[RMDB]
RNA sequence: GGGAACGACUCGAGUAGAGUCGAAAAGGAUGACAUCCUGUAAGAUUGAAUUCAGGUCGUCUGUCAUGUUCGAAUUGGAUUAUGAGGAAACCGUCUUGAAUUUACUUCAAGCUCUACCAACCAAUCAGAAGUGGCAUAUAUUCGUAUAUGCCACUUCAAAAGAAACAACAACAACAAC
Reactivity to DMS in 0.01 (KOAc 150mM, MgCl2 10mM, bicine 150mM(pH8.5), 24C), signal-to-noise 8, nucleotides 027 to 126: g010g010a030u000g010a180c070a300u000c010c000u020g000u040a050a110g000a120u020u020g010a060a060u010u000c010a040g010g000u000c030g000u020c030u020g000u000c030a060u020g010u000u020c040g020a130a120u040u030g010g000a030u010u030a030u020g000a230g020g010a060a120a300c210c050g010u010c000u010u000g000a020a010u010u000u010a040c150u010u010c010a030a080g000c060u000c060u020a090c030c040a100a090c080c030a010a030u020c110a140
Reactivity to 2A3 in 0.01 (KOAc 150mM, MgCl2 10mM, bicine 150mM(pH8.5), 24C), signal-to-noise 9, nucleotides 027 to 126: g070g020a020u070g020a020c020a090u140c010c010u010g030u060a040a060g060a160u120u250g100a080a120u070u020c010a010g030g010u040c030g060u030c060u040g120u030c020a040u060g080u060u060c060g070a250a160u090u080g020g020a030u070u100a080u300g070a080g010g060a100a080a050c090c030g130u120c010u000u010g020a030a030u080u130u160a140c100u010u020c000a010a020g010c010u000c010u050a090c010c020a080a030c010c020a020a070u060c030a060
Structure probing data (DMS and 2A3) for a 177-nucleotide construct. 2A3 adducts were read by reverse transcription with SuperScript II with manganese. Values cover nucleotides 27 to 126.